[RMDB]
RNA sequence: GGGAACGACUCGAGUAGAGUCGAAAAGGCACCAUGGGAAGUGAUUCAGAUGAAGAGAAUGUGGCAGCAAGAGCAUCCCCGGAGCCAGAACUCCAGCUCAGGCCUUACCAAAUGGAAGUUGCCCAGAAUUUAAUGAGCCGUUCGCGGCUCAUUAAAUAAAAGAAACAACAACAACAAC
Reactivity to DMS in 0.01 (KOAc 150mM, MgCl2 10mM, bicine 150mM(pH8.5), 24C), signal-to-noise 1, nucleotides 027 to 126: g010g030c020a090c050c030a040u020g020g030g000a090a090g020u030g010a160u000u000c050a060g020a110u000g020a090a100g000a130g000a090a090u020g000u000g020g000c030a030g060c070a120a080g000a080g010c050a180u000c020c020c020c130g000g020a040g020c060c090a080g040a130a140c060u000c000c000a090g000c000u000c080a100g000g010c030c030u010u020a210c080c030a020a070a000u000g000g010a090a160g000u000u010g040c030c020c060a120g030a090